[RMDB]
RNA sequence: GGGAACGACUCGAGUAGAGUCGAAAAGACGCGUCAGGCGCGAACCCGGCGACCGCGCUCGCCAACGCGGCGGCGAACGCCGCGCAGCCCGACGCGUCGGGCGCGCUCGCCGCGCUGCAGGACGCCAUCAUACUACCGCAUUCGUGCGGUAGUAUGAAAAAGAAACAACAACAACAAC
Reactivity to DMS in 0.01 (KOAc 150mM, MgCl2 10mM, bicine 150mM(pH8.5), 24C), signal-to-noise 2, nucleotides 027 to 126: g010a070c070g030c010g030u000c010a070g020g030c010g010c050g000a100a100c150c300c090g030g010c000g030a060c140c090g000c020g000c020u010c040g010c170c080a080a090c160g020c060g000g000c020g000g030c110g000a070a120c070g000c030c040g040c020g000c050a060g020c030c020c030g020a150c040g010c020g000u000c010g000g000g000c000g010c010g000c080u000c120g020c110c000g000c010g010c000u000g010c040a090g000g000a130c060g020c010c060a180
Reactivity to 2A3 in 0.01 (KOAc 150mM, MgCl2 10mM, bicine 150mM(pH8.5), 24C), signal-to-noise 1, nucleotides 027 to 126: g030a030c060g010c010g000u020c010a020g010g050c030g010c030g020a060a080c100c070c000g000g010c000g000a050c060c050g000c010g000c110u180c010g020c040c030a080a030c170g030c060g090g000c010g030g000c060g070a160a010c020g030c030c000g040c010g000c030a020g030c010c030c030g020a020c010g010c010g000u010c020g020g010g000c010g010c010g000c000u050c070g090c110c030g060c010g000c040u090g000c030a040g000g090a010c060g030c030c010a070
Chemical mapping of a 177-nucleotide RNA with DMS and 2A3.
For 2A3 the reverse transcriptase was SuperScript II with manganese.